This 207-nucleotide RNA was probed chemically with 2A3 and DMS. The 2A3 profile rests on 2,648 reads. 2A3 adducts were read by reverse transcription with SuperScript II with manganese. The RNA was probed in 150 mM KOAc, 10 mM MgCl2 and 150 mM bicine (pH 8.5) at 24 C. 2A3 is a SHAPE reagent: it acylates the 2'-hydroxyl of flexible nucleotides of all four kinds.
RNA sequence: GGGAACGACUCGAGUAGAGUCGAAAAACGUCCUUCGGGACGUAAAAAAGCGUACUACGCUUGAGGAUACAGGGAGUACGGAUCCCAAAUAGGAUCCAGUACUUUGAUCUGUAUCUACCCACCAAGCGUAUCGCAAAAAGCCCUAUUCGUAGGGCAAUCCAUACGUAUGCUUCGGCAUACGUAUGGAAAAAGAAACAACAACAACAAC
Reactivity to 2A3 in 0.01 (KOAc 150mM, MgCl2 10mM, bicine 150mM(pH8.5), 24C), signal-to-noise 3, nucleotides 027 to 156: a000c000g020u000c000c010u040u040c100g070g000g000a000c010g010u050a120a050a000a010a030a020g040c020g020u040a070c060u000a000c010g000c000u010u000g000a020g000g010a010u000a000c000a000g000g000g040a010g010u010a000c010g000g010a000u020c020c030c000a130a190a110u230a050g000g000a000u000c000c020a060g010u010a000c000u200u060u020g070a100u020c000u010g000u000a000u000c000u000a020c010c050c000a040c000c000a000a000g020c000g000u000a020u300c010g000c010a000a000a040a090a020g030c040c030c000u010a030u040u080c270g040u010a010g000g000g050c000a000a040
Reactivity to DMS in 0.01 (KOAc 150mM, MgCl2 10mM, bicine 150mM(pH8.5), 24C), signal-to-noise 2, nucleotides 027 to 156: a010c000g030u000c000c000u000u010c300g040g010g000a030c000g000u010a000a010a100a090a020a100g100c010g070u010a020c040u010a030c030g000c000u010u010g000a240g000g000a050u010a010c010a030g060g010g000a030g030u000a000c000g010g010a010u000c000c010c010a020a140a190u010a010g020g000a040u000c010c000a160g040u000a000c010u010u000u000g010a040u010c000u000g000u010a020u000c000u020a020c030c000c020a300c030c010a020a040g000c040g000u000a020u000c030g010c040a070a060a060a110a060g000c010c000c020u000a060u000u000c300g050u000a000g040g000g020c030a000a030